Structure probing data (2A3) for a 207-nucleotide construct. 2A3 adducts were read by reverse transcription with SuperScript II with manganese. The 2A3 profile rests on 1,028 reads. Values cover nucleotides 27 to 156.
[RMDB]
RNA sequence: GGGAACGACUCGAGUAGAGUCGAAAAAGAUCGAUUACGAUCGAUCAAUGAUGCCCCUCACCCACCUCUGAAGAUCCCAGGUGGGCGAGGGAACGGAGCACGGGAUCACGAGCAGUACGCUGCUCAAAAAAGAACUAGACCUUCGGGUCUAGUUCAAGGAAAUGAACGAGUUCGCUCGUUCAUUUCCAAAAGAAACAACAACAACAAC
Reactivity to 2A3 in 0.01 (KOAc 150mM, MgCl2 10mM, bicine 150mM(pH8.5), 24C), signal-to-noise 1, nucleotides 027 to 156: a000g000a000u000c020g000a000u000u100a080c250g050a010u000c000g000a000u010c000a000a040u140g040a040u170g050c000c010c010c000u000c000a020c000c010c010a000c010c000u050c040u100g050a130a040g000a020u000c000c000c000a000g010g000u000g000g000g000c000g000a000g000g000g000a010a040c050g030g050a050g140c080a030c070g000g020g000a040u040c020a020c090g000a000g000c000a000g020u060a020c190g000c020u020g000c000u000c000a020a000a000a000a000a090g000a000a000c000u000a000g000a000c000c040u020u080c300g050g000g000u010c000u000a000g000u000u000c000a000a000